[RMDB]
RNA sequence: GGGAACGACUCGAGUAGAGUCGAAAAGCUGCGGACGAGGGCGGGGAGGAGUUUGCGAUGGGAGGCGCCUGCAGGGGCUCCCCCAGUUCUGCGCUGUGAGCCGGGGCACAAAGAGCUCUCUGCACUGUGAAACAAGGUCAUUCGUGACCUUGUUUCAAAAAGAAACAACAACAACAAC
Reactivity to 2A3 in 0.01 (KOAc 150mM, MgCl2 10mM, bicine 150mM(pH8.5), 24C), signal-to-noise 3, nucleotides 027 to 126: g030c030u070g010c010g050g000a080c060g020a110g020g030g040c090g020g020g020g000a050g020g020a060g030u090u190u220g030c030g030a060u040g010g000g060a140g010g010c000g020c000c000u040g020c020a030g000g020g020g000c000u000c000c000c000c000c000a000g000u010u000c020u060g010c050g030c110u100g070u080g060a000g010c010c000g020g000g000g010c080a020c040a150a100a000g020a010g010c030u050c000u000c000u030g020c010a020c030u080g010
Reactivity to DMS in 0.01 (KOAc 150mM, MgCl2 10mM, bicine 150mM(pH8.5), 24C), signal-to-noise 2, nucleotides 027 to 126: g000c050u000g050c050g000g010a070c050g000a030g010g000g010c110g000g000g000g000a070g000g000a130g000u010u010u000g020c090g030a120u010g000g000g000a150g030g000c110g020c070c090u020g040c070a040g000g000g000g000c000u000c000c020c000c000c040a030g000u020u000c030u000g010c190g030c060u010g000u010g010a000g020c040c050g000g030g040g020c300a130c070a030a030a070g000a050g000c000u010c010u040c010u020g020c020a080c110u000g000